[RMDB]
RNA sequence: GGGAACGACUCGAGUAGAGUCGAAAAAAGUGAAAAAUAACCUUGUUUAUGUACUUGUCCAGCUAUGGGGAUGCGUUGGAAGUUGCCGUUUCUGACUAUCUUGUCGCUGCUGCUUCCACUCGUUACCGGGGAGUUCGAGAGGGUACUGACUACUUCCCAUGUGAAAUACGUUCGCGUAUUUCACAUGAAAAGAAACAACAACAACAAC
Reactivity to 2A3 in 0.01 (KOAc 150mM, MgCl2 10mM, bicine 150mM(pH8.5), 24C), signal-to-noise 9, nucleotides 027 to 156: a000a010g150u160g070a150a090a020a040a030u140a070a070c040c030u070u090g040u080u160u060a090u090g030u020a050c020u070u060g090u090c020c010a020g010c040u080a090u150g030g000g010g030a040u090g020c010g030u060u040g010g010a020a030g000u030u040g020c010c010g040u020u100u130c110u100g010a020c010u030a140u290c120u120u170g010u010c010g000c010u020g000c000u010g000c000u020u000c000c000a010c030u020c010g030u040u060a050c010c010g020g010g030g030a050g010u080u100c110g020a040g010a020g130g010g010u020a040c030u040g080a050c030u050a030c010u100u010c010c010
Reactivity to DMS in 0.01 (KOAc 150mM, MgCl2 10mM, bicine 150mM(pH8.5), 24C), signal-to-noise 5, nucleotides 027 to 156: a050a070g000u010g000a040a070a070a080a140u000a070a100c050c030u000u000g010u000u010u000a070u030g020u000a050c040u000u010g020u000c040c020a100g020c030u000a090u000g010g010g030g030a060u000g010c070g010u000u010g000g010a030a100g020u000u000g020c010c050g000u000u000u000c070u000g010a080c070u010a120u000c130u000u000g010u000c020g040c030u000g010c010u000g000c010u000u000c010c020a050c070u010c030g030u000u000a070c030c030g000g030g040g020a140g030u000u000c050g010a140g010a300g010g010g000u000a100c050u000g000a120c070u000a140c020u000u000c010c010
Source: RMDB library OK3TST, as collected in RNAgym. The record gives the reactivity of an RNA of 207 nucleotides to 2A3 and DMS. The RNA was probed in 150 mM KOAc, 10 mM MgCl2 and 150 mM bicine (pH 8.5) at 24 C. 2A3 adducts were read by reverse transcription with SuperScript II with manganese. Reactivities are given for positions 27 through 156. For 2A3, 7,716 sequencing reads were counted.